[RMDB]
RNA sequence: GGGAACGACUCGAGUAGAGUCGAAAAAUAACUGUAAACAACUAUGGAACAGUGACAAAGGUAGUAGCUGAACUCCAAGGACAGAAAGUGGAGUUAGAGGAAGAGAUUGAGGCCGUUACUUAUUCGGGAUGGUUAUACUCAGGAGUCUGGCCGAUGAUCUUAGGCAUUGGUUCGCCAAUGCCUAAGAAAAAGAAACAACAACAACAAC
Reactivity to 2A3 in 0.01 (KOAc 150mM, MgCl2 10mM, bicine 150mM(pH8.5), 24C), signal-to-noise 2, nucleotides 027 to 156: a000u120a010a040c020u060g020u090a160a100a030c010a030a020c090u080a130u100g050g010a100a020c000a040g000u030g070a040c100a040a090a030g070g000u020a030g050u030a000g040c020u010g050a050a020c010u040c000c050a010a010g110g010a050c020a040g110a050a060a010g050u030g040g020a040g020u010u020a020g000a000g040g010a060a030g030a010g010a020u110u040g000a050g040g090c020c000g040u030u050a050c020u090u100a070u050u180c120g000g020g000a000u060g000g000u000u150a040u000a060c040u050c030a050g070g000a010g020u030c050u140g040g030c020c020g000a030u050g010a000
Reactivity to DMS in 0.01 (KOAc 150mM, MgCl2 10mM, bicine 150mM(pH8.5), 24C), signal-to-noise 1, nucleotides 027 to 156: a150u000a060a100c040u000g060u000a140a160a080c030a070a040c040u010a070u020g040g020a040a210c020a050g000u030g000a140c100a100a120a070g030g010u000a090g000u000a070g000c040u010g000a030a050c010u020c000c050a030a090g000g000a270c030a100g000a030a020a100g010u000g010g000a070g020u000u000a070g020a130g030g000a100a100g000a060g010a070u010u000g040a070g020g030c000c000g030u020u000a090c030u000u000a150u020u000c070g000g010g010a080u000g020g020u000u010a100u000a180c020u020c060a120g010g000a050g000u000c060u000g000g000c000c010g060a110u000g000a110

Description: The record gives the reactivity of an RNA of 207 nucleotides to 2A3 and DMS. For DMS the reverse transcriptase was MarathonRT. For 2A3, 758 sequencing reads were counted.